Chemical mapping of a 177-nucleotide RNA with 2A3 and DMS. 2A3 adducts were read by reverse transcription with SuperScript II with manganese. DMS adducts were read by reverse transcription with MarathonRT. Conditions: 150 mM KOAc, 10 mM MgCl2 and 150 mM bicine (pH 8.5), 24 C. The DMS profile rests on 4,887 reads.
RNA sequence: GGGAACGACUCGAGUAGAGUCGAAAACACUUGAAUCGAUUGUGAUCUCAAACGUCGCUAGAAUGGCGAUCGAUUGCCGAACACAGCCAUGCCCUAUUCCAAUUUCUUCUCGCCGACGAUUGCCAUGGCACUUCCAUUAAUUCGUUAAUGGAAGUGCAAAAGAAACAACAACAACAAC
Reactivity to 2A3 in 0.01 (KOAc 150mM, MgCl2 10mM, bicine 150mM(pH8.5), 24C), signal-to-noise 6, nucleotides 027 to 126: c050a010c020u040u100g060a070a070u090c030g090a120u100u170g050u060g070a050u000c020u000c020a080a090a070c060g060u040c020g010c050u040a080g100a300a120u110g050g000c000g010a020u040c010g080a100u010u110g020c030c020g060a090a020c040a010c020a060g020c010c010a020u070g020c020c000c010u020a120u050u090c030c030a070a090u040u090u000c020u070u010c030u020c020g050c020c010g020a050c030g030a080u000u060g040c020c020a020u050g070
Reactivity to DMS in 0.01 (KOAc 150mM, MgCl2 10mM, bicine 150mM(pH8.5), 24C), signal-to-noise 4, nucleotides 027 to 126: c100a080c100u000u000g000a080a070u000c050g010a120u010u000g030u000g000a070u000c060u010c060a050a070a130c140g010u000c040g020c050u010a100g000a090a060u000g000g010c010g010a020u000c020g000a080u000u000g000c090c050g000a040a050c090a070c070a060g000c030c030a050u010g010c030c020c020u000a080u010u000c030c040a050a080u010u000u010c040u010u000c040u000c040g010c050c020g000a100c050g000a080u000u000g010c010c040a060u000g010